[RMDB]
RNA sequence: GGGAACGACUCGAGUAGAGUCGAAAAUGUAUGGAUGCCCGUCCGGGCUGGCUUGGCUAUAUCGGUGUUGCCGAUGUGGACGCGGCGGCGGAAAAGGUCAUGGCAGAGGGCGGAAAAAUCCUGCGCAAUUAGCGCAUACGUUCGCGUAUGCGCUAAUAAAAGAAACAACAACAACAAC
Reactivity to DMS in 0.01 (KOAc 150mM, MgCl2 10mM, bicine 150mM(pH8.5), 24C), signal-to-noise 2, nucleotides 027 to 126: u010g010u010a040u010g020g000a010u000g000c220c010c000g010u000c030c010g070g030g030c020u000g000g010c020u000u010g000g000c010u000a090u000a130u000c020g010g010u010g030u000u000g020c000c010g000a040u010g020u030g000g020a110c140g020c040g000g020c070g010g000c010g010g000a040a060a120a170g000g000u000c010a020u000g000g020c000a050g020a190g020g010g020c020g000g010a010a050a090a090a030u000c010c010u000g010c000g000c230a120
Reactivity to 2A3 in 0.01 (KOAc 150mM, MgCl2 10mM, bicine 150mM(pH8.5), 24C), signal-to-noise 2, nucleotides 027 to 126: u090g000u030a060u230g010g000a020u020g030c010c000c000g010u010c000c000g080g300g100c010u010g020g100c000u040u030g010g000c030u010a010u040a060u290c090g200g000u090g040u120u070g000c000c000g030a040u110g110u250g150g060a100c220g000c000g020g000c010g000g010c000g020g000a030a070a010a030g030g000u010c010a010u020g060g000c020a010g010a010g000g010g000c080g000g000a020a070a020a000a000u020c010c000u010g000c060g030c030a030

Background
The record gives the reactivity of an RNA of 177 nucleotides to DMS and 2A3. The 2A3 profile rests on 1,876 reads. The data come from the RNA Mapping Database (RMDB), library OK2TST. Conditions: 150 mM KOAc, 10 mM MgCl2 and 150 mM bicine (pH 8.5), 24 C. DMS adducts were read by reverse transcription with MarathonRT. Reactivities are given for positions 27 through 126.